[RMDB]
RNA sequence: GGGAACGACUCGAGUAGAGUCGAAAAGGCGUCGUGGUGCCCGGCCUGCCGGUGCAGGAACUGGAUUUUACUGCCAUCUCUCGCGACCCUGAGGUGGUCCAGGCUUACAACACCGACCCACUCGUGCGAGUGGGUAUGUUUUCGAACAUACCCACUCAAAAGAAACAACAACAACAAC
Reactivity to 2A3 in 0.01 (KOAc 150mM, MgCl2 10mM, bicine 150mM(pH8.5), 24C), signal-to-noise 9, nucleotides 027 to 126: g050g010c050g020u080c020g040u110g040g050u060g030c010c010c000g030g010c010c010u030g030c020c030g050g050u130g020c040a040g040g050a100a050c030u040g050g050a120u070u060u080u300a150c080u130g020c000c000a030u010c010u000c010u030c050g070c040g090a100c010c010c030u050g020a020g010g020u030g000g010u020c020c020a030g010g020c030u120u150a050c040a130a010c010a050c020c010g020a050c000c000c010a030c010u080c030g080u070g090c060
Reactivity to DMS in 0.01 (KOAc 150mM, MgCl2 10mM, bicine 150mM(pH8.5), 24C), signal-to-noise 8, nucleotides 027 to 126: g010g010c050g010u000c030g010u010g010g020u020g000c040c030c030g010g010c020c020u000g020c080c050g000g020u010g020c070a090g000g000a100a080c060u010g000g000a140u010u040u020u020a090c170u040g000c020c010a020u000c030u010c010u020c110g000c050g000a090c060c020c070u010g000a060g010g020u000g000g010u010c050c030a050g010g000c100u010u020a060c100a100a100c070a050c020c010g000a140c030c010c010a080c100u010c070g010u010g000c300